[RMDB]
RNA sequence: GGGAACGACUCGAGUAGAGUCGAAAAGGGCCUCAACAACGUCCAUACCAGACACCUGAAGCACGAGCAGCGACGACACGCAAAGAUAUAGCUGUGAUUUCACGCUCUCUGGGAGUCCAAUUGAGGCACUUACGCUAAGCUUCGGCUUAGCGUAAGUAAAAGAAACAACAACAACAAC
Reactivity to 2A3 in 0.01 (KOAc 150mM, MgCl2 10mM, bicine 150mM(pH8.5), 24C), signal-to-noise 6, nucleotides 027 to 126: g010g000g000c000c010u010c010a020a060c030a020a050c080g040u050c030c010a040u060a150c020c040a020g000a000c040a020c010c020u050g040a060a010g050c020a020c140g070a050g000c040a030g030c030g060a060c060g080a030c130a030c100g070c050a080a160a070g150a080u170a030u110a220g000c040u030g010u040g050a160u020u090u070c060a040c110g020c010u050c000u000c010u020g030g020g020a100g040u000c020c020a030a030u030u060g010a020g000g000c010
Reactivity to DMS in 0.01 (KOAc 150mM, MgCl2 10mM, bicine 150mM(pH8.5), 24C), signal-to-noise 4, nucleotides 027 to 126: g000g030g000c000c010u000c010a000a050c110a120a110c170g020u000c010c020a060u020a230c050c030a120g000a030c180a070c080c050u010g000a060a050g030c060a090c170g010a100g000c010a060g020c000g000a170c150g060a080c070a030c050g030c070a070a100a130g010a070u040a080u010a060g030c020u010g030u020g000a110u000u020u000c030a080c140g000c070u010c150u000c010u010g000g000g020a120g030u020c010c030a080a170u010u000g000a010g010g010c020
The record gives the reactivity of an RNA of 177 nucleotides to 2A3 and DMS. The data come from the RNA Mapping Database (RMDB), library OK1LIB. In probing experiments dimethyl sulfate is read out at A N1 and C N3, which are open when not base-paired. The reactions ran in a buffer of 150 mM KOAc, 10 mM MgCl2 and 150 mM bicine (pH 8.5), at 24 C. For DMS the reverse transcriptase was MarathonRT.